Source information
Chemical mapping of a 207-nucleotide RNA with 2A3 and DMS. For 2A3 the reverse transcriptase was SuperScript II with manganese. The data come from the RNA Mapping Database (RMDB), library OK3TST.

RNA sequence: GGGAACGACUCGAGUAGAGUCGAAAAGAGGACGAAUGACCGUCGCCGAACUGAUCGAGAAGCUGUCCGCUCUGCCACCGAGCACCGUCGUCGUGACGGACUCAGAGUUCGGUUACGACACCGACGUCUGGGUGUACCGGUUCCGCGCCAACGUGGAGCUAAACGGUAUGUUCGCAUACCGUUUAGCAAAAGAAACAACAACAACAAC
Reactivity to 2A3 in 0.01 (KOAc 150mM, MgCl2 10mM, bicine 150mM(pH8.5), 24C), signal-to-noise 3, nucleotides 027 to 156: g080a010g010g010a020c060g020a140a070u120g060a080c030c040g000u010c030g020c010c000g030a030a040c020u020g080a120u130c070g010a010g030a150a000g030c050u070g050u070c060c050g040c010u060c030u110g020c020c000a150c070c090g010a040g000c050a060c070c010g060u070c000g060u050c020g070u160g070a000c000g000g010a010c010u000c020a000g000a010g050u010u070c000g000g030u000u040a020c060g020a020c030a010c030c010g080a080c020g160u010c020u030g020g030g050u060g040u020a110c020c050g030g000u080u010c000c000g040c010g010c010c010a130a100c040g030u030g010g020a040
Reactivity to DMS in 0.01 (KOAc 150mM, MgCl2 10mM, bicine 150mM(pH8.5), 24C), signal-to-noise 1, nucleotides 027 to 156: g010a140g010g000a090c060g000a160a110u010g010a120c080c000g040u000c040g050c020c060g000a090a010c040u000g030a100u000c070g020a080g030a140a120g010c040u000g020u000c050c070g040c050u000c000u010g050c070c030a070c050c010g000a090g050c080a050c010c000g010u000c000g000u020c170g010u000g020a020c030g020g000a070c010u000c050a120g010a130g050u000u000c000g020g000u000u000a050c100g000a130c080a010c020c000g030a000c010g000u010c000u000g010g000g000u000g050u000a080c040c030g020g020u010u000c000c000g000c030g010c060c110a070a100c070g010u000g000g030a250